[RMDB]
RNA sequence: GGGAACGACUCGAGUAGAGUCGAAAAGGAUGCCGGCAAGGUCAAGCUGAACGAAGAAAUCUUCGGCCUCGACCCGCGUGACGACAUUCUUCAGCGCGUCGUGCGCUGGCAGCUGGCUCGCCGCCAAUCCAUAGCUGAGCUUCGGCUCAGCUAUGGAAAAAGAAACAACAACAACAAC
Reactivity to DMS in 0.01 (KOAc 150mM, MgCl2 10mM, bicine 150mM(pH8.5), 24C), signal-to-noise 2, nucleotides 027 to 126: g010g000a030u000g000c080c010g030g000c010a100a160g010g030u000c020a040a150g010c030u000g040a090a060c150g020a040a100g000a100a070a110u010c010u000u000c020g000g010c030c020u010c050g030a020c000c000c170g000c120g080u000g010a060c030g000a060c050a060u000u000c090u000u010c100a000g040c010g040c110g050u010c160g040u000g010c040g000c000u020g000g020c100a060g000c040u000g000g000c010u000c150g010c080c070g000c030c040a040a110
Reactivity to 2A3 in 0.01 (KOAc 150mM, MgCl2 10mM, bicine 150mM(pH8.5), 24C), signal-to-noise 1, nucleotides 027 to 126: g030g020a020u030g030c010c000g000g010c020a020a110g010g000u030c010a030a000g050c040u030g000a090a010c080g040a080a070g200a150a300a190u050c020u020u000c010g000g000c000c030u060c070g050a050c010c010c030g000c000g040u040g060a020c030g020a000c030a120u170u070c000u160u100c080a070g030c060g010c010g090u040c010g030u090g030c040g000c040u000g000g020c020a020g030c010u010g000g000c000u030c110g020c010c010g000c000c010a020a090
Structure probing data (DMS and 2A3) for a 177-nucleotide construct. It was measured as part of the RMDB library OK2TST.